[RMDB]
RNA sequence: GGGAACGACUCGAGUAGAGUCGAAAAACAUAUACUACCCUCCCCUCAUAAAAGAGUAUGAGGAGAUGUUCUCAGAUAGUGGAGAAAUCGAGGAUGAAGCGUUCAUCUUCCAGCCUGAGAUCCACUCAUACUGCUGUUAGUUCGCUAACAGCAGUAUAAAAGAAACAACAACAACAAC
Reactivity to 2A3 in 0.01 (KOAc 150mM, MgCl2 10mM, bicine 150mM(pH8.5), 24C), signal-to-noise 3, nucleotides 027 to 126: a010c030a020u170a010u040a130c050u070a060c010c000c020u010c000c000c000c000u000c000a080u090a040a150a020a000g110a020g090u060a010u040g010a020g040g020a050g010a080u100g030u020u000c040u000c020a020g020a280u170a060g100u040g030g040a070g050a030a080a040u100c040g030a030g050g010a020u050g020a040a030g230c100g220u080u060c030a040u020c000u020u000c030c000a070g020c020c010u040g010a010g010a040u010c010c010a030c000u030c020
Reactivity to DMS in 0.01 (KOAc 150mM, MgCl2 10mM, bicine 150mM(pH8.5), 24C), signal-to-noise 5, nucleotides 027 to 126: a050c130a070u010a120u000a060c090u000a150c020c000c020u000c000c000c000c000u000c050a040u010a030a110a100a140g020a130g010u000a020u010g010a040g000g010a080g010a050u000g020u000u000c020u010c010a110g000a110u010a060g020u000g000g010a070g010a070a090a060u010c140g000a050g000g000a030u000g000a020a170g010c240g000u010u000c050a030u000c000u000u010c010c060a080g000c110c050u000g000a060g010a100u000c020c020a010c010u000c130
An RNA of 177 nucleotides, treated with 2A3 and DMS and read out base by base. 2A3 is a SHAPE reagent: it acylates the 2'-hydroxyl of flexible nucleotides of all four kinds. The RNA was probed in 150 mM KOAc, 10 mM MgCl2 and 150 mM bicine (pH 8.5) at 24 C. For DMS the reverse transcriptase was MarathonRT. The data come from the RNA Mapping Database (RMDB), library OK2TST.